[RMDB]
About this RNA:
The record gives the reactivity of an RNA of 207 nucleotides to 2A3. 2A3 adducts were read by reverse transcription with SuperScript II with manganese.
RNA sequence: GGGAACGACUCGAGUAGAGUCGAAAAGUGCAUCCCCUGAUCAAGGAUGCCCGAAACGGUGAGGCGGAAAGCAAAUUAAAUAACGUCAACCCAUCGGGACGGUUGGCCAGUUAAGAAGUGAGGAUUCAAAAGAUCGAACCGUUCGCGGUUCGAUCAAGUUCUGUUGAGUGUUCGCACUCAACAGAACAAAAGAAACAACAACAACAAC
Reactivity to 2A3 in 0.01 (KOAc 150mM, MgCl2 10mM, bicine 150mM(pH8.5), 24C), signal-to-noise 2, nucleotides 027 to 156: g090u070g020c000a010u020c000c000c010c000u050g060a060u090c020a030a000g000g020a000u020g000c000c000c010g110a100a100a020c030g030g030u030g030a040g020g010c010g020g040a040a040a020g020c050a030a010a130u200u160a060a080a070u140a090a050c050g000u000c020a030a030c000c010c000a080u120c040g030g000g040a020c000g000g020u000u010g020g010c030c030a040g020u030u040a100a040g040a070a010g050u030g020a000g070g060a030u120u080c070a030a000a060a060g000a000u000c010g000a000a000c010c000g000u020u070c210g020c020g070g010u000u010c000g010a000u000c000a000a000
Reactivities are rounded to 0.1 and cut off at 0 and 3.
The reactions ran in a buffer of 150 mM KOAc, 10 mM MgCl2 and 150 mM bicine (pH 8.5), at 24 C.
Source: RMDB library M2RFPK, as collected in RNAgym.